Source information: Conditions: 150 mM KOAc, 10 mM MgCl2 and 150 mM bicine (pH 8.5), 24 C. This 177-nucleotide RNA was probed chemically with DMS and 2A3. For 2A3 the reverse transcriptase was SuperScript II with manganese. The DMS profile rests on 1,614 reads. The 2A3 profile rests on 555 reads. Source: RMDB library OK1LIB, as collected in RNAgym.

RNA sequence: GGGAACGACUCGAGUAGAGUCGAAAACAUAAUAGUCCGGUAUGGUAUCAUCUACAAAGAUUUUAUCUGUGGAGGAGACGGAUCUGGGGGAAUGACCAGUGCAUUGAUGAGACUCAAUUCCAAAUCCAAGAUUACAGGCUUUCGAGCCUGUAAUCUUAAAAGAAACAACAACAACAAC
Reactivity to DMS in 0.01 (KOAc 150mM, MgCl2 10mM, bicine 150mM(pH8.5), 24C), signal-to-noise 2, nucleotides 027 to 126: c090a160u050a120a050u020a050g000u020c020c010g000g040u040a070u020g020g000u020a010u000c010a010u000c040u020a050c300a130a070a010g000a000u020u040u020u020a060u000c020u000g000u030g000g000a050g000g010a050g000a060c120g000g000a010u000c040u000g050g020g010g000g030a120a080u020g010a050c070c060a020g030u040g010c070a050u000u090g030a010u050g000a180g000a080c030u000c040a060a140u000u010c010c080a060a140a030u020c130c120
Reactivity to 2A3 in 0.01 (KOAc 150mM, MgCl2 10mM, bicine 150mM(pH8.5), 24C), signal-to-noise 2, nucleotides 027 to 126: c040a040u220a200a050u100a240g010u010c040c150g070g000u090a100u140g050g020u010a010u030c040a010u000c000u030a220c150a050a200a040g010a030u060u110u030u170a090u230c080u010g020u030g040g110a020g000g140a070g050a010c040g030g020a020u000c000u030g030g000g010g020g150a000a250u120g070a040c000c000a000g000u030g100c040a080u040u160g040a100u220g000a120g010a100c070u000c080a000a120u020u020c000c010a070a000a100u140c070c050